Chemical mapping of a 177-nucleotide RNA with 2A3 and DMS.
RNA sequence: GGGAACGACUCGAGUAGAGUCGAAAAAGUCGCUGGAGAUGCCGAUGGGCGCACUCAAGGGGUUGAGCAACGUUGUGGCGACGACGUUGCGAUCGGUGUUGAUGAAGGACACAGUCUAAUCACUGGAACUCUGAUUAUGAUUCGUCAUAAUCAGAGUAAAAGAAACAACAACAACAAC
Reactivity to 2A3 in 0.01 (KOAc 150mM, MgCl2 10mM, bicine 150mM(pH8.5), 24C), signal-to-noise 6, nucleotides 027 to 126: a000g060u020c020g000c050u060g060g040a110g010a080u080g030c020c020g060a100u130g070g030g030c050g000c060a030c020u060c050a040a070g060g000g000g020u060u140g050a040g010c000a000a000c010g000u000u010g020u040g080g020c050g020a030c000g000a000c010g010u000u010g000c000g000a040u040c030g020g010u050g020u070u060g050a160u070g050a070a050g070g000a010c050a000c010a100g020u000c030u080a050a060u090c040a030c090u040g030g040a040
Reactivity to DMS in 0.01 (KOAc 150mM, MgCl2 10mM, bicine 150mM(pH8.5), 24C), signal-to-noise 9, nucleotides 027 to 126: a080g010u000c030g020c010u010g020g010a130g010a100u010g020c040c020g020a110u000g010g000g010c060g010c090a060c060u000c070a080a100g010g000g010g010u010u000g010a170g010c010a010a010c010g010u000u000g010u000g010g010c080g010a080c020g010a000c000g010u000u000g010c000g010a040u000c070g010g000u000g010u000u010g010a120u000g010a090a090g010g000a070c100a080c030a060g000u000c030u000a090a080u010c110a040c030u000g000g010a200
DMS adducts were read by reverse transcription with MarathonRT.
The data come from the RNA Mapping Database (RMDB), library OK2TRN.